[RMDB]
RNA sequence: GGGAACGACUCGAGUAGAGUCGAAAAAGGGAUAGGUAUUUCACAAUUUGUUGUUGGACCUGCCAGCGGUGGGGUAUCCUAGUGAUGAAGAAAUAUGAUCAAUUAUGUAAAUAUUGUUUGGUGAUAAAGGUAAUGACCUAUUCGUAGGUCAUUACCUAAAAGAAACAACAACAACAAC
Reactivity to DMS in 0.01 (KOAc 150mM, MgCl2 10mM, bicine 150mM(pH8.5), 24C), signal-to-noise 1, nucleotides 027 to 126: a090g000g000g000a130u010a040g020g000u000a070u000u020u000c040a100c110a130a120u000u020u000g030u000u000g000u000u000g030g010a090c080c080u020g000c040c010a140g040c120g040g020u000g000g010g010g010u010a000u000c010c020u000a050g010u020g020a060u000g020a100a090g000a050a030a030u010a010u010g000a090u000c050a080a040u000u010a060u000g000u020a090a070a060u000a060u000u000g000u000u000u010g020g020u020g010a060u000a030a100